[RMDB]
RNA sequence: GGGAACGACUCGAGUAGAGUCGAAAAAACUCAGCUAGGGAGAGUAUAACAUUCAUGUUGGCGAGACCUAGACGAAACACAGAGGAAAAUUAUUAAUCACUGGAUAGUAUUAGUAAUGACUCUGUGUAAAACUCUUCUACGUUCGCGUAGAAGAGAAGAAUACUAUAGGGUUCGCCCUAUAGUAUUCAAAAGAAACAACAACAACAAC
Reactivity to DMS in 0.01 (KOAc 150mM, MgCl2 10mM, bicine 150mM(pH8.5), 24C), signal-to-noise 2, nucleotides 027 to 156: a070a010c010u000c040a090g010c010u000a020g010g000g010a140g000a150g020u010a090u000a080a060c090a110u010u000c080a150u000g010u000u010g010g020c070g000a210g010a100c020c000u000a060g000a160c050g000a150a150a020c000a010c010a020g000a030g000g010a090a110a080a050u000u000a010u000u000a010a000u000c120a060c000u020g010g010a210u000a110g010u000a050u000u000a010g010u000a020a030u000g000a180c000u000c000u000g020u000g010u000a030a020a060a100c020u000c000u000u010c010u000a010c000g030u010u000c300g040c020g030u000a010g000a020a010g000a010g040a010a070
Reactivity to 2A3 in 0.01 (KOAc 150mM, MgCl2 10mM, bicine 150mM(pH8.5), 24C), signal-to-noise 4, nucleotides 027 to 156: a000a000c000u000c010a010g010c020u010a000g000g030g000a030g010a030g050u120a150u090a300a030c060a040u080u210c040a050u190g020u030u040g050g020c040g030a020g020a040c000c000u010a010g000a040c020g010a000a050a000c000a000c000a000g010a010g000g040a060a220a110a000u000u000a000u000u000a000a020u030c050a010c040u040g070g100a150u300a300g000u010a000u010u000a000g000u000a000a000u020g010a010c000u000c000u000g000u000g000u000a000a010a000a000c010u010c000u000u000c000u000a000c000g010u010u050c200g000c000g070u010a000g000a000a010g010a010g000a000a020

An RNA of 207 nucleotides, treated with DMS and 2A3 and read out base by base. Reactivities are given for positions 27 through 156. 2A3 adducts were read by reverse transcription with SuperScript II with manganese. The reactions ran in a buffer of 150 mM KOAc, 10 mM MgCl2 and 150 mM bicine (pH 8.5), at 24 C.